[RMDB]
RNA sequence: GGGAACGACUCGAGUAGAGUCGAAAACAACGACGUCGAGCGCGUCUGCCUCAAGACGGUGAAGCACAGGUGGCUGGACGAGAGCGCGCCAAUGAAGAUGUCGCCGCUGCAUGCCGCGCUGGUCGCGGAUGAGCGGCCCGUUCGCGGGCCGCUCAUCAAAAGAAACAACAACAACAAC
Reactivity to 2A3 in 0.01 (KOAc 150mM, MgCl2 10mM, bicine 150mM(pH8.5), 24C), signal-to-noise 3, nucleotides 027 to 126: c060a030a010c010g150a010c010g040u050c070g060a020g000c030g010c000g030u050c040u060g010c020c020u160c110a080a050g080a170c030g010g080u050g060a070a030g090c050a050c060a130g040g040u040g060g020c030u080g020g060a050c080g040a050g020a020g110c160g000c010g030c090c040a090a120u250g080a120a050g060a090u160g050u080c010g000c020c010g040c050u050g020c020a030u170g020c000c010g000c000g010c070u080g070g080u150c010g010c020g080
Reactivity to DMS in 0.01 (KOAc 150mM, MgCl2 10mM, bicine 150mM(pH8.5), 24C), signal-to-noise 2, nucleotides 027 to 126: c090a130a240c010g010a050c020g020u010c050g020a090g030c010g040c040g000u000c020u010g010c100c200u000c100a120a070g000a060c060g010g000u000g030a100a070g000c060a070c090a120g020g040u010g010g010c020u000g000g000a090c110g010a160g010a070g000c020g000c040g000c000c020a070a120u040g000a130a110g010a100u020g010u010c060g010c000c010g000c000u000g000c040a080u020g000c040c000g010c010g020c010u000g000g000u000c020g010c020g020
Source: RMDB library OK2TRN, as collected in RNAgym. This 177-nucleotide RNA was probed chemically with 2A3 and DMS.